RNA sequence: GGGAACGACUCGAGUAGAGUCGAAAAAUGUAGGUUCGCCUACAUAUGGAGGGGUCCCUCUUUGAUCUUGUCAGCUUUGGCUGAAGCCUCCACGGCCAGUGAGCUUGGAUUUAGGGAGAGGGACGGAGGCACCCGUUGCGACCCAUUCGUGGGUCAAGAGAGCGAAUCAUUUCGAUGAUUCGCUCUCAAAAGAAACAACAACAACAAC
Reactivity to 2A3 in 0.01 (KOAc 150mM, MgCl2 10mM, bicine 150mM(pH8.5), 24C), signal-to-noise 2, nucleotides 027 to 156: a010u010g010u000a000g030g050u130u030c280g110c050c010u000a010c000a010u090a100u030g110g060a190g100g050g000g040u030c000c020c040u010c040u050u030u060g300a300u140c090u070u200g110u280c040a030g000c020u040u030u020g000g010c000u000g000a070a000g010c000c000u000c000c000a010c040g030g020c020c000a100g040u080g170a000g000c040u110u230g130g050a190u130u110u300a060g030g000g000a000g000a000g010g000g000a000c010g000g020a000g000g040c000a010c020c000c000g070u050u060g070c000g010a000c000c030c000a010u050u000c180g060u020g030g000g000u000c000a010a020